[RMDB]
RNA sequence: GGGAACGACUCGAGUAGAGUCGAAAAUUGAACCGAUGAAUGAGGGCCUUCAACUUCGAAAAGGACUUGGAGACACUGUGAAUGUUUUCAAUGCCGUGAAACUUAACCUCACAGAAGUCGUGCGUAAGUAGCGUAGUGACUUCGGUCACUACGCUACAAAAGAAACAACAACAACAAC
Reactivity to DMS in 0.01 (KOAc 150mM, MgCl2 10mM, bicine 150mM(pH8.5), 24C), signal-to-noise 1, nucleotides 027 to 126: u000u020g000a210a200c020c040g000a050u000g000a190a100u000g000a100g020g000g000c140c090u020u010c050a030a110c160u000u000c120g000a090a030a160a100g010g000a050c020u000u000g020g000a010g000a040c020a030c040u000g060u020g000a120a030u020g020u000u000u020u000c030a000a040u000g020c050c060g010u000g000a030a050a030c140u020u000a070a090c070c000u010c000a100c100a060g010a200a090g020u020c020g030u000g000c050g000u000a060a090
Reactivity to 2A3 in 0.01 (KOAc 150mM, MgCl2 10mM, bicine 150mM(pH8.5), 24C), signal-to-noise 1, nucleotides 027 to 126: u070u030g020a010a030c040c000g000a020u120g040a030a100u060g000a040g020g020g050c030c060u210u100c030a060a030c050u130u080c120g120a070a080a130a010g000g000a000c000u000u000g050g000a010g010a020c010a000c120u060g010u150g300a170a040u060g000u020u000u000u000c000a020a050u020g050c040c000g070u030g040a080a060a000c050u080u080a010a030c030c000u060c000a000c000a030g160a100a030g010u030c020g040u050g030c170g070u160a140a090

Structure probing data (DMS and 2A3) for a 177-nucleotide construct. It was measured as part of the RMDB library OK2TST. The DMS profile rests on 626 reads.